[RMDB]
RNA sequence: GGGAACGACUCGAGUAGAGUCGAAAACCUUAAAAAAGGUUUCAAACUUGCAUUUAAACUACUACAAACGAAGAAAUAACAAUGAAGAUGACCAGGGAAACAUGACGUACAGUAAUGUGCGUUAGCAUCCACUACUUAUUUUCGAAUAAGUAGUGGAAAAAGAAACAACAACAACAAC
Reactivity to DMS in 0.01 (KOAc 150mM, MgCl2 10mM, bicine 150mM(pH8.5), 24C), signal-to-noise 9, nucleotides 027 to 126: c000c000u010u030a000a050a080a090a060a040g010g010u010u000u010c060a060a100a090c070u010u010g010c060a060u010u010u010a070a100a080c100u010a050c050u020a080c130a060a080a090c150g000a070a050g010a040a070a040u020a060a060c160a040a050u010g010a100a050g000a070u000g020a080c010c030a060g000g000g000a070a060a070c150a070u010g000a000c010g010u000a010c010a010g000u050a070a080u000g020u000g000c010g010u000u000a030g010c180a130
Reactivity to 2A3 in 0.01 (KOAc 150mM, MgCl2 10mM, bicine 150mM(pH8.5), 24C), signal-to-noise 9, nucleotides 027 to 126: c000c000u010u030a100a070a020a010a010a010g080g010u020u020u030c100a110a130a080c030u040u080g010c010a080u050u050u120a110a130a060c040u120a020c020u070a050c080a090a200a020c100g110a070a070g090a080a090a050u140a090a030c070a040a060u130g020a040a040g020a060u070g040a060c000c010a010g030g010g040a010a080a040c030a040u100g000a000c000g000u010a000c000a020g030u130a080a090u050g000u000g000c000g000u000u000a000g010c010a030